[RMDB]
RNA sequence: GGGAACGACUCGAGUAGAGUCGAAAAAGAGAUCAAAACGGGAGUUUAGGUGGAAUAAAGUGUUUACCACAGCACUCUCUGUAUAGUAAAGACCAAUGAAGAGCCAGGUACAGGCCAGUGUGAUGGUUCACGCCUGUAAUCCCAGCACUUUGGGAGAGCAGUCCAUUAGUUUCGACUAAUGGACUGCAAAAGAAACAACAACAACAAC
Reactivity to 2A3 in 0.01 (KOAc 150mM, MgCl2 10mM, bicine 150mM(pH8.5), 24C), signal-to-noise 1, nucleotides 027 to 156: a000g000a010g040a070u120c110a000a000a150a070c010g000g000g000a030g000u000u170u300a110g010g010u000g050g050a120a090u150a040a200a050g110u130g120u160u130u100a120c000c000a050c000a040g080c030a010c000u050c000u060c030u040g010u050a150u050a080g120u040a000a000a100g000a010c000c000a000a050u040g030a060a080g010a080g120c030c040a060g030g000u000a010c010a010g000g020c060c060a140g000u000g000u050g030a210u100g000g080u120u040c020a000c020g030c030c000u000g000u000a000a040u010c000c020c000a010g040c010a040c070u060u080u050g000g010g000a080g000a000